The record gives the reactivity of an RNA of 177 nucleotides to DMS and 2A3. The reactions ran in a buffer of 150 mM KOAc, 10 mM MgCl2 and 150 mM bicine (pH 8.5), at 24 C. 2A3 adducts were read by reverse transcription with SuperScript II with manganese. The DMS profile rests on 1,269 reads. For DMS the reverse transcriptase was MarathonRT.
RNA sequence: GGGAACGACUCGAGUAGAGUCGAAAAGCCAGUGCUACCAGGGUUAUCUCACAACCUCAGAUGCUGGAUAAGUCGACGGAGGCAGAAUCGCUUUGGGAUGACAUUCAGAAAGCCUGGAGUGAUUACUAGACCUGUAUUUCUUCGGAAAUACAGGUCUAAAAGAAACAACAACAACAAC
Reactivity to DMS in 0.01 (KOAc 150mM, MgCl2 10mM, bicine 150mM(pH8.5), 24C), signal-to-noise 1, nucleotides 027 to 126: g000c020c010a080g000u060g030c020u000a070c040c000a270g020g000g000u000u050a080u080c080u000c100a040c120a040a070c030c000u050c050a070g000a030u050g000c060u000g050g000a050u030a020a000g020u030c000g000a090c080g000g020a190g000g060c150a150g020a070a020u000c030g010c020u000u000u000g000g050g000a060u020g000a290c090a110u000u030c170a160g000a060a260a070g000c000c030u000g030g010a000g020u000g020a080u000u010a060c150u060
Reactivity to 2A3 in 0.01 (KOAc 150mM, MgCl2 10mM, bicine 150mM(pH8.5), 24C), signal-to-noise 3, nucleotides 027 to 126: g040c020c000a020g040u060g080c030u020a090c030c000a030g010g000g000u070u090a100u080c090u090c070a070c040a090a100c000c000u070c000a050g120a110u140g020c070u050g040g040a060u080a160a030g050u030c030g020a090c110g090g000a040g000g000c060a030g160a060a010u020c010g030c000u010u070u000g010g020g010a030u100g040a060c050a130u180u260c050a100g090a120a070a000g020c000c000u050g000g000a020g010u000g030a040u000u080a090c070u010